Conditions: 150 mM KOAc, 10 mM MgCl2 and 150 mM bicine (pH 8.5), 24 C. An RNA of 177 nucleotides, treated with 2A3 and DMS and read out base by base. In probing experiments dimethyl sulfate is read out at A N1 and C N3, which are open when not base-paired. The 2A3 profile rests on 6,562 reads.
RNA sequence: GGGAACGACUCGAGUAGAGUCGAAAAAUCCUGCACUCAGUUUGUUCAUUGACUGUGGAGCCUGGAAAUGGAGGAGAAAGUAAAUUUGAUGAUUACUAAUACUUCGCUGUCUUUAGAGGACGCGGAGGAUUGCAUAAAUGUUCGCAUUUAUGCAAUCAAAAGAAACAACAACAACAAC
Reactivity to 2A3 in 0.01 (KOAc 150mM, MgCl2 10mM, bicine 150mM(pH8.5), 24C), signal-to-noise 6, nucleotides 027 to 126: a000u010c010c000u010g000c020a010c010u050c000a020g020u000u070u080g100u170u110c060a100u080u180g050a020c010u010g010u040g050g050a040g030c010c050u020g020g040a050a070a070u110g040g020a040g010g020a050g040a030a120a020g030u080a050a100a140u120u090u130g090a100u060g020a030u060u060a050c020u040a050a120u100a120c000u000u020c000g000c060u150g020u000c000u050u110u040a190g040a090g120g010a000c010g000c000g000g000a000g010
Reactivity to DMS in 0.01 (KOAc 150mM, MgCl2 10mM, bicine 150mM(pH8.5), 24C), signal-to-noise 5, nucleotides 027 to 126: a150u000c010c000u000g010c080a140c050u000c030a030g010u000u010u000g020u000u000c130a090u000u000g000a040c050u000g020u010g010g000a110g030c050c070u010g000g010a040a070a080u010g010g010a050g000g000a090g010a070a070a050g000u010a030a040a080u000u000u010g010a140u010g010a100u000u010a040c070u000a090a070u010a300c000u000u000c000g010c000u010g030u000c010u000u000u000a150g010a170g010g010a020c010g000c000g000g000a010g000